An RNA of 207 nucleotides, treated with 2A3 and read out base by base.
The 2A3 profile rests on 529 reads.
The RNA was probed in 150 mM KOAc, 10 mM MgCl2 and 150 mM bicine (pH 8.5) at 24 C.
RNA sequence: GGGAACGACUCGAGUAGAGUCGAAAAACACUACCAGCUGCUACGGCAGCUGGUACUGAACUUUCAUGGAGUUAAGAAACCACGUAAACAAAGCGGAACCGAAAAGCUAAACGAGUAGGAAGAAUAAAUAGGUACCACCACUUCGGUGGUGGUACAAUCAUUACCGCGAGUUCGCUCGCGGUAAUGAAAAAGAAACAACAACAACAAC
Reactivity to 2A3 in 0.01 (KOAc 150mM, MgCl2 10mM, bicine 150mM(pH8.5), 24C), signal-to-noise 1, nucleotides 027 to 156: a000c020a010c010u030a010c010c000a000g000c000u000g000c010u000a020c140g140g000c010a000g000c000u000g020g000u000a000c000u000g000a010a020c060u030u240u180c070a070u210g120g020a090g000u130u110a160a000g070a060a050a010c000c020a050c090g060u180a130a200a000c040a000a130a000g000c000g010g060a070a160c000c000g020a030a050a000a000g000c040u100a170a000a000c000g000a000g010u010a060g110g000a060a050g000a000a060u250a100a070a010u090a040g010g000u000a000c000c000a000c000c000a000c020u120u020c260g020g000u000g000g000u000g000g000u000a000c000a000a000